Structure probing data (DMS and 2A3) for a 177-nucleotide construct.
[RMDB]
RNA sequence: GGGAACGACUCGAGUAGAGUCGAAAAAGCCAGAUCGUGGGAGAUGAAGAGAUAGGAAAGACCGGCUUCACUCUUGAGAUCGGCAAGCAGGUUGAGAAUUUGCGCCUGAACGGACACGUCGAGUGCCGCCUCGGGUACUAUUCGUAGUACCCGAGGCAAAAGAAACAACAACAACAAC
Reactivity to DMS in 0.01 (KOAc 150mM, MgCl2 10mM, bicine 150mM(pH8.5), 24C), signal-to-noise 2, nucleotides 027 to 126: a090g000c010c000a050g000a000u000c000g040u010g020g000g070a010g000a090u010g000a000a000g050a010g000a170u060a160g000g060a050a110a170g010a220c000c000g000g030c010u000u000c000a030c030u000c040u000u000g000a070g000a000u000c030g030g010c000a090a090g000c010a040g000g000u000u060g030a080g030a090a090u080u030u000g010c040g000c000c000u000g000a030a030c100g010g010a050c060a000c040g000u000c090g010a180g000u000g000c020c070
Reactivity to 2A3 in 0.01 (KOAc 150mM, MgCl2 10mM, bicine 150mM(pH8.5), 24C), signal-to-noise 5, nucleotides 027 to 126: a000g000c000c010a140g000a000u010c030g140u300g010g000g000a030g000a260u010g010a000a000g050a000g050a180u260a300g030g030a140a120a020g180a110c000c000g040g010c000u010u000c000a010c010u000c000u050u050g030a060g010a040u000c000g000g000c010a000a050g040c000a010g070g020u250u290g090a050g100a260a230u160u150u160g040c050g020c010c010u020g020a100a050c070g010g040a040c020a010c030g270u210c080g130a060g040u030g020c030c020
For 2A3, 2,539 sequencing reads were counted.